[RMDB]
RNA sequence: GGGAACGACUCGAGUAGAGUCGAAAAUGGUUCACGGAGGAUGCUUGGCCCAGCCACAACCUAAGGUUUUCAUGCUACACCUGUCACUUGCUGGUUGUGGGACCUCUGGCAGGUCCCUAGCCUCUCAGAGCAUGAAAUAGAGAUAAUCAGGUGUCCAGAUUACCCUCGGUUUCGACCGAGGGUAAUCAAAAGAAACAACAACAACAAC
Reactivity to 2A3 in 0.01 (KOAc 150mM, MgCl2 10mM, bicine 150mM(pH8.5), 24C), signal-to-noise 1, nucleotides 027 to 156: u050g030g000u090u080c070a030c080g040g010a060g000g060a060u010g020c000u050u040g050g030c040c000c000a020g040c000c000a110c020a030a040c010c050u070a010a190g090g070u040u040u000u040c000a030u050g000c010u050a090c060a070c120c090u090g040u050c000a070c190u050u130g050c120u100g050g020u090u060g140u100g080g000g000a000c000c000u000c040u040g300g000c250a000g000g010u000c010c000c000u000a010g000c020c000u000c020u000c060a020g000a020g030c000a010u010g000a070a000a000u130a010g070a030g060a040u130a110a050u110c050a020g000g000u030g030u010c010c070a040